[RMDB]
RNA sequence: GGGAACGACUCGAGUAGAGUCGAAAAGAUAUGGAAUAGUGUUGAGUAAGACAGCGAUAAGCUAUACUGGAUCGGAAACGAUCUUAUAGCUUUUGACGCUGUAUUACUCAACACUAUUCCUAAGUCACUCUAAUAGUGAGUUCGCUCACUAUUAGAGAAAAGAAACAACAACAACAAC
Reactivity to DMS in 0.01 (KOAc 150mM, MgCl2 10mM, bicine 150mM(pH8.5), 24C), signal-to-noise 6, nucleotides 027 to 126: g010a050u010a300u010g000g010a010a000u000a010g020u000g020u000u000g000a020g000u010a010a010g000a020c000a020g020c000g030a160u000a010a020g010c010u000a000u000a020c300u000g000g010a000u000c000g010g010a150a130a220c000g000a010u000c000u010u000a000u000a010g010c000u000u000u000u010g010a190c070g010c000u000g010u000a020u000u000a000c000u000c000a010a000c000a000c000u000a000u000u000c000c000u000a010a080g000u000c040a250